[RMDB]
Structure probing data (2A3 and DMS) for a 177-nucleotide construct.

RNA sequence: GGGAACGACUCGAGUAGAGUCGAAAAUCCACAGGCUUUCUUGAACUGUGAACUCGUGUGUGCAUGCUCCUCAUAUAUUGUUCUAGAUCCCAUGCAUGAUGCAUAUCGAUCGAUCUGAUCUGAAUUAGCAAUUAAUGCUCUUCGGAGCAUUAAUUGCAAAAGAAACAACAACAACAAC
Reactivity to 2A3 in 0.01 (KOAc 150mM, MgCl2 10mM, bicine 150mM(pH8.5), 24C), signal-to-noise 4, nucleotides 027 to 126: u030c010c000a030c000a050g010g030c040u100u090u000c000u070u130g110a090a050c010u060g010u050g070a040a040c010u020c050g050u040g000u000g010u020g050c000a020u040g000c000u060c010c000u050c060a010u110a000u030a030u100u120g050u030u000c020u050a020g010a110u020c000c010c010a010u030g020c000a040u200g030a030u090g080c030a020u050a060u120c060g020a040u040c030g060a100u030c080u140g000a010u030c010u020g030a030a100u110u030a080
Reactivity to DMS in 0.01 (KOAc 150mM, MgCl2 10mM, bicine 150mM(pH8.5), 24C), signal-to-noise 2, nucleotides 027 to 126: u020c030c000a200c130a060g000g000c030u010u000u010c030u000u010g000a120a110c100u020g020u000g000a070a120c060u000c030g040u000g000u000g040u010g000c110a050u000g010c030u000c050c040u020c120a100u010a060u020a070u020u010g010u000u000c080u000a120g000a090u000c020c010c000a100u000g000c000a100u000g030a090u020g000c010a030u020a150u020c190g010a010u000c020g000a110u020c090u010g000a010u000c030u030g030a010a070u000u010a140